[RMDB]
RNA sequence: GGGAACGACUCGAGUAGAGUCGAAAACUGCCGUCCAUCCUGCCCAGGCUUUCUCCGCGUGAAUUGCUGGAUGUUUCGAUGAUCGCUUCGAUAGCUGGAGAGCUAUCGGGCGGGAAACUGUCGGAUAACUGACGAUGACUUUCGAGUCAUCGUCAGUAAAAGAAACAACAACAACAAC
Reactivity to 2A3 in 0.01 (KOAc 150mM, MgCl2 10mM, bicine 150mM(pH8.5), 24C), signal-to-noise 1, nucleotides 027 to 126: c000u060g000c000c000g000u000c010c010a000u000c010c020u030g050c000c010c020a040g010g000c000u130u110u020c060u000c000c030g030c010g080u110g130a160a100u110u110g040c050u110g060g050a100u080g110u070u100u000c100g020a050u030g030a070u140c030g000c000u170u140c050g020a000u040a030g090c060u040g010g080a190g000a030g050c000u010a020u130c070g020g000g000c020g030g020g010a010a050a030c110u090g030u010c010g040g000a030u050a110
Reactivity to DMS in 0.01 (KOAc 150mM, MgCl2 10mM, bicine 150mM(pH8.5), 24C), signal-to-noise 2, nucleotides 027 to 126: c080u000g010c000c020g000u010c060c210a130u000c010c030u020g030c050c040c030a200g030g010c020u010u000u000c040u010c010c070g020c060g000u000g010a080a070u010u010g000c010u020g000g000a060u010g010u010u000u140c060g000a090u010g000a140u000c050g020c010u000u020c020g010a070u000a060g020c020u000g010g030a170g010a010g000c010u000a010u010c040g000g000g020c010g000g040g010a060a060a110c170u000g000u000c000g010g000a120u010a110